[RMDB]
RNA sequence: GGGAACGACUCGAGUAGAGUCGAAAAUAGAAGGUGCACGAAAACAAGCCAUUCAAGCUCUCGCACUCACUAUCAUUCUAGGAGUUUAUUUUACAGCCCUGCAGGCCAUAGAGUAUUAUGAAGCUCCUUUCACAAUCGCAGAUGGUGUCUACGGGUCCGGUGUACGACAUUUCGAUGUCGUACACCGAAAAGAAACAACAACAACAAC
Reactivity to 2A3 in 0.01 (KOAc 150mM, MgCl2 10mM, bicine 150mM(pH8.5), 24C), signal-to-noise 1, nucleotides 027 to 156: u220a020g000a050a050g130g040u020g000c050a010c140g120a020a070a010a000c210a030a140g020c010c000a100u120u140c050a110a040g060c100u020c040u070c130g000c000a010c000u020c020a000c030u070a000u100c010a020u300u000c010u080a000g010g010a000g090u000u030u040a070u010u040u050u140a040c070a020g040c070c000c000u140g080c180a100g100g000c010c010a000u040a080g130a010g030u030a040u070u020a050u150g100a030a090g010c010u050c000c000u020u220u100c170a170c020a110a100u150c070g010c120a000g000a070u030g060g000u010g000u040c000u000a030c010g050g050g030u000c050